[RMDB]
RNA sequence: GGGAACGACUCGAGUAGAGUCGAAAACUGUUUGAGUAUACAAAACGUAAUGUUUUGCCUACACUCACUCAGAUGAACCUUAAGUAUGCAAUUUCAGCCAAGGAUCGUGCUCGCACUGUGGCUGGUGUCUCCAUCAUAAGCACCAUGACUAACAGGCUCGGCUAGGUUAUUUCGAUAACCUAGCCGAAAAAGAAACAACAACAACAAC
Reactivity to 2A3 in 0.01 (KOAc 150mM, MgCl2 10mM, bicine 150mM(pH8.5), 24C), signal-to-noise 1, nucleotides 027 to 156: c000u000g070u010u000u010g050a040g000u030a120u070a110c010a000a000a010a000c010g180u260a210a170u300g010u020u040u050u000g030c000c000u010a030c030a000c050u010c000a000c000u000c000a010g030a080u160g020a030a000c000c000u060u000a190a050g090u030a080u200g040c070a050a100u000u150u180c030a040g090c040c010a040a030g100g000a040u130c030g050u060g000c040u050c050g020c030a110c100u000g000u010g030g000c000u000g010g000u030g010u000c040u000c030c020a150u050c000a040u110a300a000g000c000a010c000c010a020u150g140a190c010u030a000a010c000a000g040g050c000